An RNA of 177 nucleotides, treated with 2A3 and DMS and read out base by base. The RNA was probed in 150 mM KOAc, 10 mM MgCl2 and 150 mM bicine (pH 8.5) at 24 C. The 2A3 profile rests on 1,008 reads.
[RMDB]
RNA sequence: GGGAACGACUCGAGUAGAGUCGAAAAUGACUGCCAACCAGCAGAUUGCCGAUCUCGUUCAGGCGCUUGGUUGCGGCACGCGGAAGAAUUACCGCGAGGAUGACCUGCGUUAUGACCGCGUGAUCGAUAUUUACCCGCGAUUCGUCGCGGGUAAAUAAAAAGAAACAACAACAACAAC
Reactivity to 2A3 in 0.01 (KOAc 150mM, MgCl2 10mM, bicine 150mM(pH8.5), 24C), signal-to-noise 2, nucleotides 027 to 126: u090g050a040c000u000g000c020c030a040a090c000c000a020g040c030a020g110a280u210u120g030c000c000g030a040u050c100u040c140g120u060u040c050a050g000g000c010g060c060u120u180g000g000u010u010g030c000g000g070c070a000c010g010c080g000g050a030a040g070a170a110u180u050a060c000c000g020c100g040a030g000g040a120u180g080a130c000c000u050g010c000g000u040u020a100u050g050a020c010c060g000c010g030u020g020a070u070c060g030a020
Reactivity to DMS in 0.01 (KOAc 150mM, MgCl2 10mM, bicine 150mM(pH8.5), 24C), signal-to-noise 2, nucleotides 027 to 126: u010g010a190c040u000g010c090c020a040a050c070c060a100g060c090a060g000a110u000u000g020c050c010g010a080u000c240u010c090g000u000u000c060a070g030g010c040g030c020u000u000g000g020u000u000g000c020g000g000c000a020c010g010c010g030g000a030a130g010a170a090u000u000a040c060c000g000c000g000a040g000g000a160u000g030a140c000c000u000g000c000g020u000u000a070u010g000a110c090c010g000c080g020u000g000a040u010c080g020a130